[RMDB]
RNA sequence: GGGAACGACUCGAGUAGAGUCGAAAAGCACUCGCUGGGACACUAUUGGGCUUGACCAAGGGAGCUUCUCUGAAGCGCGCACGGAGAAGCUUUGAUCUUGGUACAGCCAGGGUGUCCUGUGCUGAAGCGCGCACGGCAACCGAAAGGUGCGGGGGAAGACCUACCUUAUCUUCGGAUAAGGUAGGUCAAAAGAAACAACAACAACAAC
Reactivity to 2A3 in 0.01 (KOAc 150mM, MgCl2 10mM, bicine 150mM(pH8.5), 24C), signal-to-noise 1, nucleotides 027 to 156: g040c030a010c050u010c000g020c000u020g000g000g000a000c010a000c020u120a220u300u300g240g020g010c050u070u090g000a000c010c000a020a010g020g000g000a000g000c000u000u010c000u000c000u000g080a190a120g030c000g010c000g000c000a000c010g030g000a010g000a000a000g090c000u080u040u000g000a000u000c000u000u000g010g000u160a300c030a000g000c000c000a000g000g010g010u000g000u000c010c000u000g000u000g000c000u000g000a110a040g000c000g000c020g000c010a020c000g010g020c000a000a010c000c010g010a050a000a040g020g000u020g010c000g010g000g010g000g020a060a000